[RMDB]
RNA sequence: GGGAACGACUCGAGUAGAGUCGAAAAGCCGCGCUCGCGUGGUGGGUCAGUACCGCUUUUGCCCCCGCCGAGGGCUGGCGCUGGCUGCUGGGGCUGGCCGCGCUGCCGGGGCUGGUCGGCCUGAUUGGUUAAUGGCCAAUUUCGAUUGGCCAUUAACAAAAGAAACAACAACAACAAC
Reactivity to DMS in 0.01 (KOAc 150mM, MgCl2 10mM, bicine 150mM(pH8.5), 24C), signal-to-noise 2, nucleotides 027 to 126: g010c000c010g010c020g020c030u000c220g040c100g020u010g010g030u000g000g010g000u000c120a100g020u010a080c100c080g000c130u010u000u000u000g000c000c060c010c020c030g050c030c010g010a100g010g000g020c030u020g030g010c010g010c010u000g060g020c010u000g000c070u020g010g010g010g010c000u000g000g000c000c000g020c090g000c050u000g000c110c040g020g000g000g020c030u000g020g010u000c010g010g000c110c010u000g010a080u000u020g020
Reactivity to 2A3 in 0.01 (KOAc 150mM, MgCl2 10mM, bicine 150mM(pH8.5), 24C), signal-to-noise 2, nucleotides 027 to 126: g010c000c010g020c030g030c010u040c030g100c020g010u030g000g020u090g020g000g010u080c040a020g030u070a120c030c060g060c120u090u040u160u250g020c010c000c020c010c020g040c010c000g030a110g010g120g020c040u050g000g000c050g020c070u060g030g000c040u060g060c050u100g030g050g000g040c000u000g030g010c000c000g000c030g000c030u050g010c020c040g040g010g030g000c030u040g010g040u000c000g030g010c020c000u100g050a140u030u140g090